About this RNA: The data come from the RNA Mapping Database (RMDB), library M2RFPK. An RNA of 207 nucleotides, treated with 2A3 and read out base by base. The reactions ran in a buffer of 150 mM KOAc, 10 mM MgCl2 and 150 mM bicine (pH 8.5), at 24 C.

RNA sequence: GGGAACGACUCGAGUAGAGUCGAAAAACGGAUGGUAGGCCAUCCGACCAUUGGGUAGAAGCGUUCAAUCAGCACCGUGACGGUGCAGAUGGGAAAUUGCCCAUGAUACGCACCAUACGUGGUGCGAAAAAGCCAUCGGUGUUCGCACCGAUGGCAAGAAAUUUUACCGGUUCGCCGGUAAAAUUUCAAAAGAAACAACAACAACAAC
Reactivity to 2A3 in 0.01 (KOAc 150mM, MgCl2 10mM, bicine 150mM(pH8.5), 24C), signal-to-noise 1, nucleotides 027 to 156: a000c000g000g000a000u000g030g060u260a120g030g180c020c000a000u020c000c000g000a020c020c010a060u010u080g020g000g010u050a070g010a180a040g000c040g010u030u030c030a060a060u000c030a030g000c000a010c010c030g180u190g300a150c240g000g000u020g000c010a000g000a000u020g000g010g030a010a110a040u050u030g000c030c000c000a000u020g030a020u060a020c030g000c000a000c000c000a000u010a100c190g090u050g000g020u010g000c000g000a030a000a000a000a000g000c000c000a000u000c010g000g000u030g020u060u060c170g050c100a000c000c010g000a000u000g000g000c000a000a000